Record summary: Structure probing data (2A3 and DMS) for a 177-nucleotide construct.
RNA sequence: GGGAACGACUCGAGUAGAGUCGAAAAAACGAGCGGCUUCAACGGUAUGGUAGCCGCGGCUAACAAGCAAUGAGGCAACGAGCGGAGUGAUAUGUAGCGCUUGCGCAAUCAUUUGCACUUGUUGCUCCACGCAUAAGACGUUCGCGUCUUAUGCGUGAAAAGAAACAACAACAACAAC
Reactivity to 2A3 in 0.01 (KOAc 150mM, MgCl2 10mM, bicine 150mM(pH8.5), 24C), signal-to-noise 3, nucleotides 027 to 126: a000a010c130g010a030g000c020g010g020c010u050u050c090a080a060c110g130g100u230a100u260g100g000u060a000g000c000c000g000c000g000g020c000u040a050a040c040a100a000g040c010a010a050u110g030a030g000g000c000a010a000c040g040a010g000c050g000g000a030g030u030g010a020u070a140u300g080u150a100g020c060g010c200u140u240g020c010g000c030a000a030u020c020a060u040u040u190g120c050a040c080u000u010g000u000u010g000c000u000c020
Reactivity to DMS in 0.01 (KOAc 150mM, MgCl2 10mM, bicine 150mM(pH8.5), 24C), signal-to-noise 2, nucleotides 027 to 126: a040a080c110g010a120g000c000g000g000c000u000u000c060a080a110c120g000g010u030a060u010g030g030u000a030g020c010c000g000c010g000g000c060u000a110a130c200a110a060g000c040a040a110u010g020a030g000g020c020a020a020c050g000a010g040c070g000g000a030g010u010g000a020u020a070u010g010u000a090g010c000g010c150u010u010g040c010g000c020a090a050u000c030a020u000u000u000g020c010a080c000u000u000g010u000u000g010c010u000c080

Record summary:
DMS adducts were read by reverse transcription with MarathonRT. Reactivities are given for positions 27 through 126. It was measured as part of the RMDB library OK2TST.